RNA sequence: GGGAACGACUCGAGUAGAGUCGAAAAAGGGAGGAUCGGAUGGGAAGAGUAUAUCCUAUGGGAAUCCCCGUCCUCCCGUCACGUCCAGCCCCUCCCCGUGUCUAGUGAAGGGGGACUCCGGAACUCCAUGCCCGGGAGUUCGCUCCCGGGAAAAGAAACAACAACAACAAC
Reactivity to DMS in 0.01 (KOAc 150mM, MgCl2 10mM, bicine 150mM(pH8.5), 24C), signal-to-noise 4, nucleotides 027 to 129: a120g010g000g030a070g000g000a060u030c120g000g030a070u000g060g020g030a010a030g030a110g060u030a160u040a090u020c020c030u050a110u030g050g000g000a100a100u040c010c010c000c010g020u000c000c000u010c010c010c040g030u000c090a000c050g030u080c010c010a150g040c050c010c010c020u020c010c000c010c040g040u030g030u080c050u030a100g050u050g000a140a080g000g000g000g000g000a000c030u020c050c040g030g020a000a000c050u030c060c000a070u080g020
Reactivity to 2A3 in 0.01 (KOAc 150mM, MgCl2 10mM, bicine 150mM(pH8.5), 24C), signal-to-noise 6, nucleotides 027 to 129: a010g010g010g010a010g000g000a040u170c110g090g040a060u080g030g020g010a070a020g060a080g160u090a060u030a030u210c000c000u090a140u230g130g000g010a010a070u040c000c000c000c000g010u000c000c000u010c000c000c000g000u000c000a010c040g070u030c030c030a040g000c010c000c000c000u030c010c000c000c010g070u110g030u090c080u080a070g020u050g160a040a040g000g010g000g020g000a020c000u020c020c010g000g000a010a010c040u060c050c020a030u110g060